[RMDB]
RNA sequence: GGGAACGACUCGAGUAGAGUCGAAAAUCGUAUUAAGUUAAUGGAAGAAGCGGGCAUUACUUUCAUUAAUGGUGUUGAAGUAGGCGUUGAUAUUGAUAAAGCAACGUUAGAAUCUGAGUAUGAUGCCGGUCAAAAGACAGUUCGCUGUCUUUUGACCAAAAGAAACAACAACAACAAC
Reactivity to DMS in 0.01 (KOAc 150mM, MgCl2 10mM, bicine 150mM(pH8.5), 24C), signal-to-noise 1, nucleotides 027 to 126: u000c060g020u010a040u000u080a060a020g070u000u010a010a000u000g000g000a030a020g000a160a190g020c010g000g010g010c000a110u060u110a090c030u000u010u000c000a010u010u000a020a000u000g010g020u000g000u040u000g000a070a220g000u050a070g030g050c060g000u000u020g010a030u020a200u010u000g040a110u060a050a110a150g030c060a000a000c010g000u000u000a100g000a030a110u020c040u000g010a070g000u000a040u010g020a020u000g000c050c030
Reactivity to 2A3 in 0.01 (KOAc 150mM, MgCl2 10mM, bicine 150mM(pH8.5), 24C), signal-to-noise 1, nucleotides 027 to 126: u020c000g040u050a070u130u300a050a070g000u000u040a000a000u000g000g000a080a000g000a040a000g090c040g060g040g000c060a000u030u030a090c000u000u000u000c000a000u000u000a000a020u070g170g040u040g180u020u270g000a130a110g040u110a040g000g000c000g080u000u000g010a090u090a050u110u300g050a050u060a160a140a000g080c000a000a000c000g000u000u000a010g000a130a040u050c160u050g000a000g010u070a110u200g000a000u000g210c040c000

The record gives the reactivity of an RNA of 177 nucleotides to DMS and 2A3. The RNA was probed in 150 mM KOAc, 10 mM MgCl2 and 150 mM bicine (pH 8.5) at 24 C. For DMS the reverse transcriptase was MarathonRT.